[RMDB]
RNA sequence: GGGAACGACUCGAGUAGAGUCGAAAAUGGUGUCUCCAGCACCAGGGCCAUACGGCUGCAACACCCCUACAAGUGCCGGUAGGUGUGGGCUGAGACCAUCCUACAUGGGGAAGGCCCUGAGAGGCCGACCCACUCCUCGAUUCGUCGAGGAGUGGGUAAAAGAAACAACAACAACAAC
Reactivity to DMS in 0.01 (KOAc 150mM, MgCl2 10mM, bicine 150mM(pH8.5), 24C), signal-to-noise 8, nucleotides 027 to 126: u000g010g020u010g010u000c040u010c080c120a160g000c020a070c080c020a070g010g010g010c020c020a150u010a180c130g000g010c010u000g010c080a120a200c100a120c020c020c010c020u000a070c120a080a130g010u010g010c060c050g000g010u000a030g000g010u010g030u000g000g000g010c060u000g000a150g010a090c020c010a060u000c020c020u000a050c100a110u010g000g000g000g020a160a130g010g000c010c000c010u010g000a110g010a130g010g010c010c020g010
Reactivity to 2A3 in 0.01 (KOAc 150mM, MgCl2 10mM, bicine 150mM(pH8.5), 24C), signal-to-noise 5, nucleotides 027 to 126: u070g000g000u050g040u040c030u030c070c020a010g000c010a070c030c010a030g010g060g040c020c010a050u120a230c100g000g010c000u050g040c020a080a040c020a080c040c030c000c000u030a030c070a200a090g060u050g150c040c010g060g000u020a010g000g010u050g060u040g070g050g000c070u080g050a050g030a100c000c010a000u010c010c000u030a070c040a150u220g000g000g000g040a050a060g020g000c010c030c020u050g070a100g020a060g040g010c010c000g010

Conditions: 150 mM KOAc, 10 mM MgCl2 and 150 mM bicine (pH 8.5), 24 C.
Structure probing data (DMS and 2A3) for a 177-nucleotide construct.
For DMS, 10,538 sequencing reads were counted.
It was measured as part of the RMDB library OK2TRN.